[RMDB]
RNA sequence: GGGAACGACUCGAGUAGAGUCGAAAAGAAAGAAAGAUCCUUGGCUUCCUGUACAUCUCUGUGCGUGUCUGGGCGUCACUCCAAGCGGACAUGGUAGCUUUUGUCUGCAUCUGGACAACAAGGUGAAUGUCGCUUCAAAAUUCGUUUUGAAGCGACAAAAAGAAACAACAACAACAAC
Reactivity to 2A3 in 0.01 (KOAc 150mM, MgCl2 10mM, bicine 150mM(pH8.5), 24C), signal-to-noise 3, nucleotides 027 to 126: g080a010a070a000g050a070a090a010g070a050u080c000c000u040u040g070g020c050u050u040c040c010u030g030u070a050c010a100u040c030u000c010u070g080u070g040c060g030u040g010u010c010u020g020g030g010c040g020u080c060a030c060u010c030c030a040a010g040c030g040g000a000c000a020u080g030g070u140a160g040c030u070u060u000u070g010u000c020u020g020c000a060u030c140u100g000g010a010c010a080a040c040a150a070g080g000u080g080a050a040
Reactivity to DMS in 0.01 (KOAc 150mM, MgCl2 10mM, bicine 150mM(pH8.5), 24C), signal-to-noise 2, nucleotides 027 to 126: g010a110a080a090g020a090a030a080g000a110u000c030c000u000u000g000g000c090u010u000c040c000u010g010u010a080c100a020u010c040u000c110u010g040u030g010c100g000u000g000u010c030u000g000g030g040c200g040u000c050a050c120u000c040c030a070a060g030c030g030g010a040c040a000u020g010g030u020a060g010c080u010u000u000u000g030u010c000u000g000c030a020u010c070u010g000g000a050c150a010a120c090a050a060g000g010u000g000a110a040
An RNA of 177 nucleotides, treated with 2A3 and DMS and read out base by base. 2A3 adducts were read by reverse transcription with SuperScript II with manganese. Source: RMDB libraries RFM100 and RFMREP, as collected in RNAgym. DMS adducts were read by reverse transcription with MarathonRT. The RNA was probed in 150 mM KOAc, 10 mM MgCl2 and 150 mM bicine (pH 8.5) at 24 C.